[RMDB]
The record gives the reactivity of an RNA of 177 nucleotides to DMS and 2A3. The reactions ran in a buffer of 150 mM KOAc, 10 mM MgCl2 and 150 mM bicine (pH 8.5), at 24 C. For DMS the reverse transcriptase was MarathonRT. Reactivities are rounded to 0.1 and cut off at 0 and 3. For 2A3 the reverse transcriptase was SuperScript II with manganese. Source: RMDB libraries RFM100 and RFMREP, as collected in RNAgym.
RNA sequence: GGGAACGACUCGAGUAGAGUCGAAAAUGCAACUAAAAGGAGUGCUAACAGUGACUUUUGGUACGCUGUGUAUAUGCAGAAAAAGAUAUUAGACACCAAUUAAGCCGGGACGAAAGCCUAAUUGGAUUCAAUCUUUAUCAUUCGUGAUAAAGAUUGAAAAAGAAACAACAACAACAAC
Reactivity to DMS in 0.01 (KOAc 150mM, MgCl2 10mM, bicine 150mM(pH8.5), 24C), signal-to-noise 7, nucleotides 027 to 126: u010g010c060a050a060c050u020a040a040a070a100g010g010a110g020u000g000c050u010a070a050c090a060g020u000g000a100c030u010u010u010u010g010g000u000a080c100g000c010u000g010u010g010u020a070u020a060u010g010c040a050g000a050a080a080a080a070g000a070u010a060u010u000a090g000a160c190a160c000c000a010a010u000u000a020a040g020c000c010g020g010g030a110c260g010a050a120a110g010c000c020u000a000a010u000u000g010g000a210u010
Reactivity to 2A3 in 0.01 (KOAc 150mM, MgCl2 10mM, bicine 150mM(pH8.5), 24C), signal-to-noise 9, nucleotides 027 to 126: u070g010c010a040a010c050u170a050a050a020a050g130g030a100g090u070g030c030u040a060a040c020a040g020u010g080a060c020u110u090u130u210g090g010u100a090c040g000c020u000g020u000g090u060a040u020a030u300g040c050a020g120a040a070a020a010a010g160a040u120a090u110u080a090g050a050c050a020c030c000a000a000u010u000a010a010g000c010c010g050g040g100a080c110g120a180a030a000g000c000c000u010a010a010u010u010g000g010a000u010